[RMDB]
RNA sequence: GGGAACGACUCGAGUAGAGUCGAAAAGGAUGAUCUGGGCCCGGCCAGUGAUCCGAAUUAGUACCGGGAUUGCAUCGUCGAGCCGUCAGGGGCGAAGACGAGAACCUGAAAGCACGAAGCACGGGGCGGUGCGGGUGCGAGAUAUAACGCCCAACAACAUUACCCGUAUAUUCGUAUACGGGUAAUGAAAAGAAACAACAACAACAAC
Reactivity to DMS in 0.01 (KOAc 150mM, MgCl2 10mM, bicine 150mM(pH8.5), 24C), signal-to-noise 2, nucleotides 027 to 156: g020g030a130u010g000a090u000c000u010g020g010g000c010c000c000g020g000c010c000a090g020u000g010a100u000c030c010g000a080a170u010u030a110g000u010a100c020c000g010g000g020a080u020u000g050c030a130u000c010g010u000c020g000a300g000c030c000g010u010c110a160g010g020g030g000c020g000a090a250g020a070c040g000a110g010a060a070c010c040u000g010a110a070a130g000c050a100c050g010a150a200g020c000a020c070g000g020g000g000c040g050g000u010g010c020g000g000g030u000g010c020g000a040g020a130u000a110u010a090a050c030g010c000c010c010a090a090c040a140a300
Reactivity to 2A3 in 0.01 (KOAc 150mM, MgCl2 10mM, bicine 150mM(pH8.5), 24C), signal-to-noise 3, nucleotides 027 to 156: g030g000a040u090g020a060u070c020u020g000g000g020c010c000c000g010g000c000c000a010g000u040g080a030u000c010c010g020a040a050u180u080a100g050u100a080c000c030g000g000g000a020u040u130g010c050a060u000c000g000u000c010g010a010g000c000c000g160u260c200a080g130g020g100g000c020g030a060a000g020a000c010g000a000g000a010a040c020c030u110g090a110a050a050g000c010a000c050g040a090a020g000c000a000c010g000g000g000g000c010g000g000u010g010c010g030g070g000u020g000c070g040a020g040a030u240a020u040a090a030c040g000c000c010c010a020a020c040a020a000
This 207-nucleotide RNA was probed chemically with DMS and 2A3. High DMS reactivity at an A or C suggests that its Watson-Crick edge is free. The 2A3 profile rests on 2,951 reads. DMS adducts were read by reverse transcription with MarathonRT. Conditions: 150 mM KOAc, 10 mM MgCl2 and 150 mM bicine (pH 8.5), 24 C. 2A3 adducts were read by reverse transcription with SuperScript II with manganese. For DMS, 4,847 sequencing reads were counted. It was measured as part of the RMDB library OK3TST.